This 177-nucleotide RNA was probed chemically with 2A3 and DMS.
Values cover nucleotides 27 to 126.
For 2A3 the reverse transcriptase was SuperScript II with manganese.
DMS (dimethyl sulfate) methylates the pairing face of unpaired adenines and cytosines.
The 2A3 profile rests on 1,216 reads.
RNA sequence: GGGAACGACUCGAGUAGAGUCGAAAAUUGAUAAAAUAGAUGUUUUGCUUACUGUUGAUGGUGUUAAUUUUACCACUAGGUAUGUACCUCUUGGUGAAGUUUUUGGCAAAACACUAGGCAAUGUAUAAUGAUUACCGGUAUUCGUACCGGUAAUCAUAAAAGAAACAACAACAACAAC
Reactivity to 2A3 in 0.01 (KOAc 150mM, MgCl2 10mM, bicine 150mM(pH8.5), 24C), signal-to-noise 2, nucleotides 027 to 126: u010u070g030a000u130a120a110a000a050u080a020g200a260u030g050u000u030u000u000g000c010u080u070a040c050u110g190u300u180g150a140u210g010g090u050g010u180u040a010a000u010u000u010u010a000c000c000a010c010u010a010g010g000u000a050u300g070u040a030c000c000u000c000u000u010g000g000u000g010a010a000g020u030u010u020u140u190g020g010c000a000a000a000a000c010a000c010u000a010g060g000c000a030a060u040g060u090a150u050a090
Reactivity to DMS in 0.01 (KOAc 150mM, MgCl2 10mM, bicine 150mM(pH8.5), 24C), signal-to-noise 2, nucleotides 027 to 126: u000u000g000a140u000a040a080a100a120u000a030g000a090u010g010u000u000u000u000g000c010u000u020a030c040u000g000u020u010g010a120u010g000g010u000g000u010u000a010a000u000u000u000u000a010c010c000a010c020u000a020g010g030u000a120u010g020u020a050c000c000u000c010u000u000g010g020u000g010a010a020g010u000u000u000u000u020g000g010c010a010a020a010a010c000a020c010u000a030g010g000c070a060a030u000g010u000a110u000a120